[RMDB]
RNA sequence: GGGAACGACUCGAGUAGAGUCGAAAAUGGAGUGUUCGUACCAAUAACCACAUCAGGUCUCCAAGGUGAAUAGCCUCUGGUCAAAUGUAUUAAUGUAGAUAAGGGAAGUCGGCAAAACCGAUCUGUAAACUAUUUUACGGUUCGCCGUAAAAUAGUUAAAAGAAACAACAACAACAAC
Reactivity to DMS in 0.01 (KOAc 150mM, MgCl2 10mM, bicine 150mM(pH8.5), 24C), signal-to-noise 8, nucleotides 027 to 126: u010g000g020a070g010u010g010u010u000c080g030u010a100c040c030a060a090u030a110a200c040c020a050c090a060u020c080a050g010g010u000c030u010c010c040a060a120g010g020u020g010a080a060u030a090g010c020c020u010c060u010g010g000u010c070a050a080a070u020g010u010a070u020u010a070a080u010g020u020a070g010a060u010a060a090g010g000g010a040a090g010u000c020g000g000c060a060a030a070a230c060c020g000a030u010c030u020g000u010a120
Reactivity to 2A3 in 0.01 (KOAc 150mM, MgCl2 10mM, bicine 150mM(pH8.5), 24C), signal-to-noise 8, nucleotides 027 to 126: u110g030g010a080g020u070g020u060u090c040g040u060a090c010c020a020a060u120a090a050c040c020a030c010a110u100c040a050g010g070u000c010u000c030c010a030a020g080g020u090g040a080a080u110a110g020c000c000u030c030u040g020g010u040c020a060a050a040u090g030u080a070u120u080a120a070u080g050u070a050g060a200u110a120a030g040g020g010a050a020g040u030c010g020g020c030a040a020a020a050c020c000g010a020u010c010u010g090u070a040
About this RNA
The record gives the reactivity of an RNA of 177 nucleotides to DMS and 2A3. Conditions: 150 mM KOAc, 10 mM MgCl2 and 150 mM bicine (pH 8.5), 24 C.